[RMDB]
RNA sequence: GGGAACGACUCGAGUAGAGUCGAAAAUCUGUAAAGAGGAGACUGCUGGACCCGCCGCCCAAGUUCGAGCAUGAGCCACAGUUCCGAGCGAAGGGACGCGCGGGGCAGGAUCAUCCCCGAGAGGGGAUGAGACGGUAAAGAGCAUUGGAACGUCGGACUACUUGUAUCCCUUCGGGGAUACAAGUAGAAAAGAAACAACAACAACAAC
Reactivity to 2A3 in 0.01 (KOAc 150mM, MgCl2 10mM, bicine 150mM(pH8.5), 24C), signal-to-noise 1, nucleotides 027 to 156: u050c010u040g020u050a000a030a270g050a050g040g000a040g030a070c040u050g000c040u030g100g060a130c000c030c000g000c010c010g020c010c000c010a060a030g020u060u020c010g000a000g050c100a120u130g030a070g110c070c080a140c040a060g010u060u000c090c010g010a010g000c020g060a220a290g000g030g110a160c010g010c030g000c010g010g080g000g060c000a000g000g030a020u000c000a000u000c000c000c000c000g030a010g000a010g030g000g030g000a010u010g000a000g040a050c080g000g000u040a050a060a010g040a000g000c060a040u070u100g030g000a100a010c040g080u000c030g070g000a000